[RMDB]
RNA sequence: GGGAACGACUCGAGUAGAGUCGAAAAGCUGUUACUGCCAGACCGUUCGCUGCCGCGCUCUCCUGCCUCCGCGUCGUGGCGCCUGUCUGGUUCUUCGCCCCACGCGGACGAGUGAUCGGUGACGUCCGCGUCGGCCGGAUUUCGAUCCGGCCGACGCAAAAGAAACAACAACAACAAC
Reactivity to DMS in 0.01 (KOAc 150mM, MgCl2 10mM, bicine 150mM(pH8.5), 24C), signal-to-noise 1, nucleotides 027 to 126: g010c100u010g010u000u000a040c110u010g020c070c010a070g000a060c030c080g000u010u010c010g010c030u000g000c040c030g010c000g020c050u000c030u020c090c040u000g030c070c070u000c050c050g020c060g020u000c300g060u000g000g010c030g040c300c040u000g000u000c070u020g000g000u010u000c020u000u000c110g000c020c020c030c030a120c070g000c010g000g000a020c060g010a090g010u020g010a110u010c020g000g020u000g010a120c010g010u000c000c050